RNA sequence: GGGAACGACUCGAGUAGAGUCGAAAAGGUACGUUCUCUCAAAUUGAGUGAUAAUAAUUGUUAUCUUAAUGCAGUUAUUAUGACACUUGAUUUAUUGAAGGACAUUAAAUUUGUUAUACCUGCUCUACCAGAUUCGCCUUCGGGCGAAUCAAAAGAAACAACAACAACAAC
Reactivity to 2A3 in 0.01 (KOAc 150mM, MgCl2 10mM, bicine 150mM(pH8.5), 24C), signal-to-noise 5, nucleotides 027 to 129: g030g000u030a020c040g010u010u000c010u000c000u000c040a000a000a000u000u000g000a020g020u010g000a010u010a010a000u000a000a000u000u000g000u020u090a110u130c140u130u280a120a130u280g000c000a000g000u000u010a000u010u000a010u040g110a070c000a000c000u000u020g000a000u000u010u080a180u030u110g100a100a030g020g030a000c000a020u070u190a020a060a200u170u100u110g120u070u050a090u030a070c020c010u020g000c000u000c010u050a050c010c010a000
Reactivity to DMS in 0.01 (KOAc 150mM, MgCl2 10mM, bicine 150mM(pH8.5), 24C), signal-to-noise 3, nucleotides 027 to 129: g020g010u010a030c190g010u030u000c040u010c000u000c190a030a060a000u030u010g010a010g050u010g020a120u000a000a000u040a000a000u000u000g030u000u060a100u050c300u120u090a090a100u070g000c040a040g000u000u000a020u020u020a070u040g050a140c070a000c030u000u000g000a000u000u000u000a110u020u020g010a000a000g000g020a000c000a060u020u010a050a120a110u030u000u060g030u050u050a130u010a030c000c000u030g020c120u050c050u060a130c000c000a160

The record gives the reactivity of an RNA of 170 nucleotides to 2A3 and DMS. It was measured as part of the RMDB library 15KLIB. Reactivities are given for positions 27 through 129. Conditions: 150 mM KOAc, 10 mM MgCl2 and 150 mM bicine (pH 8.5), 24 C.